[RMDB]
RNA sequence: GGGAACGACUCGAGUAGAGUCGAAAAGGGCACGUGAGCGGCCAUCCAGUGUAGCUUCGCUGCGCGUCCAUGGCGGCGAACGCGCGUGAUCUGGAGUUUGGAUGGUCGUUCAUGUGUCCGUCUUCUCACCAUAUGUUGAGUUCGCUCAACAUAUGGUAAAAGAAACAACAACAACAAC
Reactivity to DMS in 0.01 (KOAc 150mM, MgCl2 10mM, bicine 150mM(pH8.5), 24C), signal-to-noise 3, nucleotides 027 to 126: g010g010g000c010a010c000g020u000g000a020g010c000g000g000c000c000a010u000c000c000a040g020u010g050u020a060g010c060u000u000c010g020c040u000g010c000g010c010g010u010c040c020a110u000g010g010c060g030g030c160g010a040a010c010g010c000g010c000g010u000g000a080u000c070u010g020g000a030g010u010u010u010g010g000a020u000g010g020u000c000g010u000u000c000a010u010g010u000g010u000c000c000g000u000c020u000u000c010u000c010
Reactivity to 2A3 in 0.01 (KOAc 150mM, MgCl2 10mM, bicine 150mM(pH8.5), 24C), signal-to-noise 7, nucleotides 027 to 126: g000g000g000c000a000c010g010u000g010a000g000c000g000g000c000c000a000u000c000c010a010g030u080g190u290a040g010c050u010u000c010g020c070u100g010c020g000c000g030u010c040c030a100u130g190g050c140g050g010c060g030a060a010c010g010c000g000c010g070u040g020a130u060c100u150g040g030a050g050u080u160u060g010g000a000u000g000g000u000c000g000u000u000c000a000u000g000u000g000u000c000c000g000u000c010u000u000c000u000c000
This 177-nucleotide RNA was probed chemically with DMS and 2A3. Values cover nucleotides 27 to 126. The 2A3 profile rests on 21,958 reads. The DMS profile rests on 11,080 reads.